Source: RMDB library OK2TRN, as collected in RNAgym. This 177-nucleotide RNA was probed chemically with 2A3 and DMS.
RNA sequence: GGGAACGACUCGAGUAGAGUCGAAAAACAGAGUGCCACGUCCUCCACAGAUGAAUCCUCUUCAGCUGUUACAGCCGCUUCCGGCGGAGAUCAAAGGGACUAAAUUGUUAGCCCACUGGGAUUCAGGUAAUCCACUGUCUUUCGAGACAGUGGAUUAAAAAGAAACAACAACAACAAC
Reactivity to 2A3 in 0.01 (KOAc 150mM, MgCl2 10mM, bicine 150mM(pH8.5), 24C), signal-to-noise 2, nucleotides 027 to 126: a000c020a010g050a000g080u110g070c020c010a030c030g040u030c010c040u060c020c010a080c000a030g080a030u040g050a000a020u040c020c030u060c050u080u050c030a040g000c010u000g000u070u130a110c040a090g010c010c020g100c110u130u010c020c020g030g000c030g040g010a040g000a000u130c040a000a120a050g040g000g040a070c010u040a050a040a130u200u120g100u090u070a020g000c000c020c000a000c010u040g010g020g020a040u080u090c010a020g140g000
Reactivity to DMS in 0.01 (KOAc 150mM, MgCl2 10mM, bicine 150mM(pH8.5), 24C), signal-to-noise 4, nucleotides 027 to 126: a070c050a070g000a110g010u010g000c010c010a100c080g010u000c050c010u000c020c050a090c090a090g010a080u000g010a060a030u000c070c060u000c120u010u000c080a070g010c020u000g010u000u010a100c160a070g030c020c040g020c100u000u010c110c070g020g030c020g000g000a050g000a040u000c110a050a110a120g000g010g010a030c010u000a010a030a170u000u010g010u000u010a030g010c010c000c020a120c070u010g010g000g010a070u010u010c030a030g020g010
Annotation: For 2A3 the reverse transcriptase was SuperScript II with manganese. For DMS the reverse transcriptase was MarathonRT. For 2A3, 1,369 sequencing reads were counted.